[RMDB]
RNA sequence: GGGAACGACUCGAGUAGAGUCGAAAAUGAAAGACAGUAUUGAUGAAAUCAUUUCUUCACUGGAAGAUGCAGCACAGUAGAAAGAAGGUGGUUAUGUGAAGAAAAUAGUUGCAGCAUGGAUUGAACACAAGUAACCUUCGUUCGCGAAGGUUACUUGAAAAGAAACAACAACAACAAC
Reactivity to 2A3 in 0.01 (KOAc 150mM, MgCl2 10mM, bicine 150mM(pH8.5), 24C), signal-to-noise 2, nucleotides 027 to 126: u160g010a000a000a050g140a010c100a040g070u080a120u230u200g140a260u190g000a030a030a030u030c070a100u000u040u000c030u010u020c000a000c060u050g000g000a090a050g070a140u070g100c030a000g030c000a030c000a060g120u250a040g060a050a200a000g100a200a020g090g070u010g000g040u080u050a140u280g070u020g070a000a060g010a000a030a000a000u190a020g000u090u060g010c030a000g090c000a030u000g000g100a030u000u170g070a080a010c050a000
Reactivity to DMS in 0.01 (KOAc 150mM, MgCl2 10mM, bicine 150mM(pH8.5), 24C), signal-to-noise 2, nucleotides 027 to 126: u020g010a120a050a100g010a100c100a060g000u000a040u010u020g000a120u010g010a130a100a130u000c070a100u000u010u000c030u000u020c030a030c020u000g000g000a060a080g000a090u020g000c020a110g070c090a090c070a050g010u010a080g020a070a050a050g010a040a080g000g030u000g000g010u010u000a050u010g050u000g000a050a010g000a020a030a040a050u010a030g000u020u000g010c020a050g000c050a040u020g000g010a120u000u000g020a060a000c210a230
The record gives the reactivity of an RNA of 177 nucleotides to 2A3 and DMS. The reactions ran in a buffer of 150 mM KOAc, 10 mM MgCl2 and 150 mM bicine (pH 8.5), at 24 C. The 2A3 profile rests on 821 reads. For DMS the reverse transcriptase was MarathonRT.